Structure probing data (DMS and 2A3) for a 177-nucleotide construct. The data come from the RNA Mapping Database (RMDB), library OK2TRN. Values cover nucleotides 27 to 126. For DMS the reverse transcriptase was MarathonRT.
RNA sequence: GGGAACGACUCGAGUAGAGUCGAAAAGCUUGUAAUCCCAGCUACUUGGAAGGCUGAGGUGGGAGGAUCACUUGAACCCAGGAGGCAGAGGUUGCAGUCAGCUGAGAUCAUACCACUGUACUCCAGCUACACCAACUUUGUUCGCAAAGUUGGUGUAAAAAGAAACAACAACAACAAC
Reactivity to DMS in 0.01 (KOAc 150mM, MgCl2 10mM, bicine 150mM(pH8.5), 24C), signal-to-noise 4, nucleotides 027 to 126: g030c090u010u010g010u000a130a140u010c010c000c000a100g000c040u010a050c050u000u010g010g000a100a090g000g000c070u000g020a070g020g020u000g000g000g020a060g010g000a090u010c060a040c050u000u010g010a080a110c020c020c010a110g010g000a070g020g010c040a020g010a090g010g020u000u000g000c230a090g010u010c070a100g010c110u010g010a110g010a020u000c050a170u000a050c030c010a080c050u010g010u000a070c010u000c010c010a140g010c180
Reactivity to 2A3 in 0.01 (KOAc 150mM, MgCl2 10mM, bicine 150mM(pH8.5), 24C), signal-to-noise 3, nucleotides 027 to 126: g040c110u070u070g080u170a030a040u030c020c010c010a020g030c010u100a070c040u070u070g110g070a100a070g130g000c040u050g030a030g030g070u060g000g040g010a060g010g020a030u080c010a010c020u030u050g040a050a050c000c010c050a070g030g000a000g000g000c000a000g020a020g050g020u010u010g000c020a010g040u040c000a020g040c100u130g120a050g010a210u120c010a010u040a040c020c010a000c020u020g010u080a300c010u040c010c010a020g000c000